Source: RMDB libraries RFM100 and RFMREP, as collected in RNAgym. The record gives the reactivity of an RNA of 177 nucleotides to 2A3 and DMS. The RNA was probed in 150 mM KOAc, 10 mM MgCl2 and 150 mM bicine (pH 8.5) at 24 C. Reactivities are given for positions 27 through 126. For 2A3 the reverse transcriptase was SuperScript II with manganese.
RNA sequence: GGGAACGACUCGAGUAGAGUCGAAAAAAGGGACCCUAUGGCUUAGGGGAAAGUCCCCGGACACUGGGUAGAGAGUACCUGGGGUGUAACCCCCCACACCUGAUCUAAACCACCUGGGGUUAUACACUCCCACGUUAAAAUUCGUUUUAACGUGGGAAAAAGAAACAACAACAACAAC
Reactivity to 2A3 in 0.01 (KOAc 150mM, MgCl2 10mM, bicine 150mM(pH8.5), 24C), signal-to-noise 3, nucleotides 027 to 126: a000a010g060g020g020a060c040c000c000u060a070u120g100g000c050u050u110a070g000g000g020g080a040a080a070g140u110c000c000c000c010g000g000a020c020a020c080u060g010g010g000u070a040g060a010g010a010g130u030a040c020c030u040g000g000g010g010u010g020u030a060a080c020c000c000c000c010c000a020c010a010c010c010u050g040a100u060c020u120a060a070a070c020c020a020c020c020u020g030g000g000g000u030u040a130u020a070c060a020c020
Reactivity to DMS in 0.01 (KOAc 150mM, MgCl2 10mM, bicine 150mM(pH8.5), 24C), signal-to-noise 6, nucleotides 027 to 126: a070a060g010g010g000a140c000c010c000u000a050u020g000g000c100u030u030a060g020g010g000g010a090a090a170g020u010c020c000c020c050g000g010a080c050a080c100u010g010g010g030u000a040g000a120g000a140g010u010a040c050c040u000g000g000g020g010u010g010u020a070a110c070c020c000c000c090c060a060c100a100c040c020u000g010a100u010c070u010a040a070a150c060c090a120c110c070u010g010g000g000g010u000u020a040u020a070c090a060c150